Notes: Structure probing data (DMS and 2A3) for a 177-nucleotide construct. In probing experiments dimethyl sulfate is read out at A N1 and C N3, which are open when not base-paired. It was measured as part of the RMDB libraries RFM100 and RFMREP. The RNA was probed in 150 mM KOAc, 10 mM MgCl2 and 150 mM bicine (pH 8.5) at 24 C. 2A3 adducts were read by reverse transcription with SuperScript II with manganese. 2A3 is a SHAPE reagent: it acylates the 2'-hydroxyl of flexible nucleotides of all four kinds.

RNA sequence: GGGAACGACUCGAGUAGAGUCGAAAAGCGGAACAACAUCUGGUAACAGAUGCCUCUGGGGCCAAAAGCCAAGGUUUGACAGACCCAUUAGGAUUGGUUUCAAAACCUGAAUUGUUGUGGAAGAUAUUCAAUGUAUACAUUUCGAUGUAUACAUUGAAAAAGAAACAACAACAACAAC
Reactivity to DMS in 0.01 (KOAc 150mM, MgCl2 10mM, bicine 150mM(pH8.5), 24C), signal-to-noise 6, nucleotides 027 to 126: g040c110g010g010a060a030c070a130a170c010a010u000c000u010g000g000u050a140a200c020a010g000a040u010g000c020c040u000c050u020g000g000g000g010c020c020a060a060a100a150g010c070c020a070a060g000g000u000u010u020g020a130c300a130g000a040c040c010c070a160u020u010a130g020g010a150u010u010g010g010u000u000u000c090a070a030a060a030c010c000u010g010a080a100u000u000g000u000u010g010u010g000g020a150a080g000a070u010a080u010
Reactivity to 2A3 in 0.01 (KOAc 150mM, MgCl2 10mM, bicine 150mM(pH8.5), 24C), signal-to-noise 5, nucleotides 027 to 126: g060c040g030g000a030a050c010a040a000c000a070u000c010u030g000g020u070a100a020c000a020g030a020u030g010c000c000u030c030u050g050g020g020g000c010c000a020a040a040a040g040c030c010a060a080g020g000u050u090u100g050a060c050a020g040a040c000c010c050a110u090u180a080g060g020a040u020u070g040g020u030u040u050c070a090a080a050a060c010c000u050g060a170a070u030u050g020u040u010g000u010g070g050a050a030g050a140u140a150u120